This 177-nucleotide RNA was probed chemically with 2A3 and DMS. For 2A3 the reverse transcriptase was SuperScript II with manganese.
RNA sequence: GGGAACGACUCGAGUAGAGUCGAAAAAUGUCAAGAUUAUAAUCUUUUCAUACAUUUUCAAGAUUGGUAAACGGGUCAUGCUCGGUGAAGGUGGUGAACUGAUUCCAUUCGACAAUGCUCCUCAUGGCGGCUUUAUCUAAUUCGUUAGAUAAAGCCGAAAAGAAACAACAACAACAAC
Reactivity to 2A3 in 0.01 (KOAc 150mM, MgCl2 10mM, bicine 150mM(pH8.5), 24C), signal-to-noise 9, nucleotides 027 to 126: a000u030g000u010c020a030a030g010a020u050u100a070u210a280a060u000c000u020u000u020u010c010a000u050a200c020a050u030u020u000u070c040a060a070g060a180u080u150g090g050u170a100a060a040c030g000g000g040u050c050a050u220g050c020u020c040g080g030u090g050a060a030g020g020u050g010g040u020g040a010a040c010u030g000a030u120u000c020c020a030u030u040c020g010a010c010a020a060u100g020c010u020c020c010u060c060a090u080g110g020
Reactivity to DMS in 0.01 (KOAc 150mM, MgCl2 10mM, bicine 150mM(pH8.5), 24C), signal-to-noise 3, nucleotides 027 to 126: a050u020g000u000c040a060a050g000a020u010u030a110u050a040a080u000c010u000u010u000u000c020a040u010a090c070a070u010u030u000u000c050a070a110g010a120u040u020g000g000u030a040a060a060c080g010g010g000u010c120a080u020g010c010u000c030g020g000u000g000a040a050g000g000u000g000g050u000g010a030a010c040u040g010a060u000u010c050c060a110u010u020c070g010a060c060a060a040u000g010c090u000c020c030u000c090a120u020g010g000

Source information:
High 2A3 reactivity points to a flexible backbone, as in loops and unpaired stretches. The reactions ran in a buffer of 150 mM KOAc, 10 mM MgCl2 and 150 mM bicine (pH 8.5), at 24 C. For 2A3, 7,872 sequencing reads were counted. For DMS the reverse transcriptase was MarathonRT.